[RMDB]
RNA sequence: GGGAACGACUCGAGUAGAGUCGAAAAUGAUCGAUAUUCAGGUAACUGCAUCUGCUUAUCAGAUCUGUUCAGAGCCGACCCUCCGUCACACCUUUGUGUUUCCCAGUAAUUCUGCCUGGCGUUGCCGUAACGUCGUUCAUUUCGAUGAACGACGUUAAAAAGAAACAACAACAACAAC
Reactivity to DMS in 0.01 (KOAc 150mM, MgCl2 10mM, bicine 150mM(pH8.5), 24C), signal-to-noise 3, nucleotides 027 to 126: u000g040a000u000c020g000a020u000a020u000u000c020a000g000g000u000a100a150c300u030g020c100a030u000c000u000g000c040u010u000a020u010c010a120g040a020u010c000u000g010u000u020c070a070g000a090g000c010c010g000a120c050c030c030u000c010c030g010u020c030a050c040a100c030c060u010u000u020g030u000g000u000u010u000c010c010c000a080g030u010a080a120u000u010c070u010g000c050c040u000g010g010c040g030u010u000g010c010c040g010
Reactivity to 2A3 in 0.01 (KOAc 150mM, MgCl2 10mM, bicine 150mM(pH8.5), 24C), signal-to-noise 3, nucleotides 027 to 126: u100g000a030u020c000g000a010u010a010u020u030c000a010g030g000u050a110a110c110u160g060c110a020u000c000u000g000c010u010u000a030u050c020a090g010a010u000c000u020g050u020u070c050a040g000a020g110c010c010g030a090c010c010c000u010c000c020g040u050c010a020c020a020c010c020u060u060u090g030u000g030u030u040u030c000c000c000a010g050u080a030a100u110u010c030u030g040c000c020u020g010g010c030g000u040u060g050c000c000g020